[RMDB]
RNA sequence: GGGAACGACUCGAGUAGAGUCGAAAAGCGCUGUUUUCCAUCAGGAAAUACAGGCUACCGAAACAUGCGUCUCUAUGCAGGCGACAACCGGGAGGUUGACGUCCCUGCGAUAAGCCACGAGGCCAUCGACGCUGUUCACGUUCGCGUGAACAGCGUCAAAAGAAACAACAACAACAAC
Reactivity to 2A3 in 0.01 (KOAc 150mM, MgCl2 10mM, bicine 150mM(pH8.5), 24C), signal-to-noise 2, nucleotides 027 to 126: g000c150g030c090u000g010u000u000u000u000c070c080a110u200c110a200g000g000a010a000a000u090a050c000a000g000g000c000u060a070c000c030g090a070a040a060c050a010u040g020c120g040u010c030u000c000u000a080u260g040c010a000g020g010c010g010a020c000a000a000c000c000g000g060g020a140g000g000u000u000g030a030c030g050u070c070c030c000u000g000c000g030a020u050a070a020g010c000c020a040c140g000a020g000g000c000c000a000u020c020